[RMDB]
RNA sequence: GGGAACGACUCGAGUAGAGUCGAAAAAGUGUAUGAAGUGCGUAGAGUGUCGGCAAGCUCUAUAUAUGGACACUUACGAAGGGUUUUGGUUGUUUUGUAUCUCAAGCCGACUUUGAGUAUUUGAGGAAAAAGACUUACGCCUUCGGGCGUAAGUCAACACAUUGUAAUCGUUCGCGAUUACAAUGUGAAAAGAAACAACAACAACAAC
Reactivity to 2A3 in 0.01 (KOAc 150mM, MgCl2 10mM, bicine 150mM(pH8.5), 24C), signal-to-noise 4, nucleotides 027 to 156: a000g100u090g010u070a130u160g080a060a010g010u020g050c030g000u020a010g010a020g060u030g030u080c050g020g020c070a120a070g000c020u000c010u020a060u020a030u010a010u120g090g020a010c010a000c000u050u080a050c090g060a050a080g070g030g040u050u060u130u140g030g000u010u020g010u000u020u010u020g030u050a100u010c020u010c020a040a020g010c020c000g030a030c050u060u080u110g050a040g020u060a070u050u110u120g030a040g000g040a020a050a020a040a050g000a000c000u000u000a000c010g010c000c000u020u040c130g020g000g010c000g000u000a000a000g000u000c000a000a000
Reactivity to DMS in 0.01 (KOAc 150mM, MgCl2 10mM, bicine 150mM(pH8.5), 24C), signal-to-noise 1, nucleotides 027 to 156: a130g030u000g020u000a110u000g020a100a140g030u000g040c070g040u000a040g010a120g020u000g030u000c030g020g020c080a090a300g000c010u000c010u000a040u010a040u000a130u020g020g010a080c030a030c060u020u000a110c080g010a130a110g020g020g030u000u000u000u000g040g020u000u000g010u000u000u000u000g000u000a140u000c010u000c030a040a090g050c030c020g000a060c080u000u000u010g000a130g010u000a050u000u000u000g000a090g030g010a020a100a060a130a180g010a070c010u000u000a000c000g050c000c000u000u010c300g010g000g010c030g020u000a000a000g020u000c000a020a060
Structure probing data (2A3 and DMS) for a 207-nucleotide construct. 2A3 is a SHAPE reagent: it acylates the 2'-hydroxyl of flexible nucleotides of all four kinds. DMS adducts were read by reverse transcription with MarathonRT. The RNA was probed in 150 mM KOAc, 10 mM MgCl2 and 150 mM bicine (pH 8.5) at 24 C. The 2A3 profile rests on 3,120 reads.